RNA sequence: GGGAACGACUCGAGUAGAGUCGAAAAAGAAGUGAAAUGGAUUGACGGCGAAGACUGGGUGGUGAACGGCUAAUGCCAUUUGGUGAAUAUUCGGACUUCGAGGACUGUGUGUCCAAGAAUAGCGAUAAAAGCGACCCAGACGCCUAUUGUGCGGCAAGAUUUACUGAUAGUUCGCUAUCAGUAAAUCAAAAGAAACAACAACAACAAC
Reactivity to 2A3 in 0.01 (KOAc 150mM, MgCl2 10mM, bicine 150mM(pH8.5), 24C), signal-to-noise 3, nucleotides 027 to 156: a000g050a030a010g040u070g030a080a090a080u110g030g020a050u090u080g050a040c040g020g000c030g010a070a020g080a080c020u020g010g030g000u060g060g020u040g050a060a030c060g020g010c040u100a080a060u180g020c010c000a060u090u070u210g050g010u040g000a100a040u070a070u090u050c030g020g020a030c060u010u000c040g010a020g010g000a010c050u030g030u080g120u120g000u300c000c000a000a010g010a010a020u070a060g050c010g010a010u030a070a080a020a010g040c020g010a010c000c020c000a000g010a040c040g020c000c000u040a100u060u110g030u050g020c030g010g000c030a050a060
Reactivity to DMS in 0.01 (KOAc 150mM, MgCl2 10mM, bicine 150mM(pH8.5), 24C), signal-to-noise 2, nucleotides 027 to 156: a090g000a140a020g030u010g010a040a070a110u010g020g020a170u000u010g010a080c100g030g020c000g010a110a090g000a240c000u020g020g000g030u000g050g040u010g010a030a070c050g020g040c040u010a110a170u000g030c030c000a130u010u000u000g000g000u010g000a110a150u010a090u000u000c050g030g000a150c100u000u000c010g020a300g020g040a050c010u010g040u020g010u010g000u000c010c020a010a260g000a050a080u000a140g010c020g010a100u000a050a080a060a210g020c010g000a130c010c010c020a250g020a070c000g030c000c030u000a100u000u020g030u010g000c080g010g000c070a100a250